This 177-nucleotide RNA was probed chemically with 2A3.
[RMDB]
RNA sequence: GGGAACGACUCGAGUAGAGUCGAAAACCAUGGGAUGCCCUUCCCGAUUCCGUCCAUCCCCACUCCCAGAGGGUCGCCCAGGAAUGGCGGGACCCCACUUCAGCAGGGUCCGCGUUCCAUCCUUUCUGCUACUUGAUAACUUCGGUUAUCAAGUAGCAAAAGAAACAACAACAACAAC
Reactivity to 2A3 in 0.01 (KOAc 150mM, MgCl2 10mM, bicine 150mM(pH8.5), 24C), signal-to-noise 1, nucleotides 027 to 126: c010c000a000u100g050g050g000a020u050g000c000c000c000u000u020c060c000c000g020a050u140u020c060c030g110u030c000c000a120u060c060c000c010c000a060c000u010c000c000c020a050g060a030g110g040g020u100c060g080c080c010c020a020g010g180a050a080u080g300g260c060g080g000g040a020c010c000c000c010a010c010u300u190c060a070g100c010a040g030g020g000u010c050c000g070c000g000u060u000c000c000a020u070c010c030u080u060u050c060u020

For 2A3, 808 sequencing reads were counted.
Reactivities are rounded to 0.1 and cut off at 0 and 3.